[RMDB]
RNA sequence: GGGAACGACUCGAGUAGAGUCGAAAAACCGUUCAUUCACGUAAUUGGUAUUUACAUCUGUUUGAUAAGACAAUGUUGUGAAGCUACCACGUGUUGGAUUAUGGCUGAACGCCUCUAAGUCAGAAUCGAUAAAACAUUUCUUCGGAAAUGUUUUAUCAAAAGAAACAACAACAACAAC
Reactivity to DMS in 0.01 (KOAc 150mM, MgCl2 10mM, bicine 150mM(pH8.5), 24C), signal-to-noise 6, nucleotides 027 to 126: a090c010c010g020u000u010c030a050u000u000c010a020c020g010u010a140a120u010u010g010g010u000a060u000u000u000a020c000a010u000c030u010g020u000u000u010g010a200u020a120a080g010a020c010a040a080u010g000u000u010g010u000g010a020a020g000c140u000a040c160c070a070c030g020u000g000u000u010g000g010a020u000u010a090u010g010g000c000u010g000a100a120c120g000c030c030u000c080u000a090a070g010u010c040a060g010a110a070u010c120
Reactivity to 2A3 in 0.01 (KOAc 150mM, MgCl2 10mM, bicine 150mM(pH8.5), 24C), signal-to-noise 4, nucleotides 027 to 126: a000c010c010g000u040u030c030a060u080u060c010a000c010g010u050a180a110u150u080g000g020u070a250u100u050u030a000c000a010u000c030u030g150u020u060u080g290a240u170a140a030g020a020c030a070a140u190g020u040u000g020u020g020a030a010g070c040u020a010c000c030a020c000g010u010g000u020u020g020g000a020u050u040a050u280g010g000c000u050g080a120a030c060g010c020c000u000c020u070a070a080g030u040c010a010g120a080a100u130c070